[RMDB]
RNA sequence: GGGAACGACUCGAGUAGAGUCGAAAAGUUUGUGCUCUGACCUGACCCUCAGGCCCUGCCAGUGCCCUGGCUUCCAGGCAGAUCUGGGCAGGCAGGUCUGAGCCCCCGGAGCUGGGUAAGCAUCUGGAUUUAAUCGUACGUUCGCGUACGAUUAAAUAAAAGAAACAACAACAACAAC
Reactivity to DMS in 0.01 (KOAc 150mM, MgCl2 10mM, bicine 150mM(pH8.5), 24C), signal-to-noise 5, nucleotides 027 to 126: g000u000u000u000g020u010g010c020u000c020u010g000a030c020c000u000g000a170c040c130c030u000c050a050g010g010c190c030c030u000g010c000c020a130g030u010g000c070c020c060u010g020g010c080u000u010c080c080a110g000g000c040a060g000a090u000c020u000g000g000g020c070a060g000g010c010a010g000g000u000c000u000g000a010g010c010c030c020c010c030g010g010a080g010c020u000g000g000g010u010a120a070g010c030a100u000c030u000g010g000
Reactivity to 2A3 in 0.01 (KOAc 150mM, MgCl2 10mM, bicine 150mM(pH8.5), 24C), signal-to-noise 1, nucleotides 027 to 126: g050u080u110u120g140u160g000c010u000c020u040g020a040c010c010u030g170a210c000c020c000u040c060a040g020g030c080c010c000u020g010c000c050a080g040u020g140c000c020c040u040g090g010c000u110u080c060c050a070g000g000c010a020g030a150u060c010u060g000g000g000c000a020g010g010c000a000g000g000u030c000u000g010a010g000c020c000c010c000c000g020g020a010g000c010u040g020g090g080u130a030a010g010c010a150u040c020u060g030g000
An RNA of 177 nucleotides, treated with DMS and 2A3 and read out base by base. The RNA was probed in 150 mM KOAc, 10 mM MgCl2 and 150 mM bicine (pH 8.5) at 24 C. Reactivities are given for positions 27 through 126.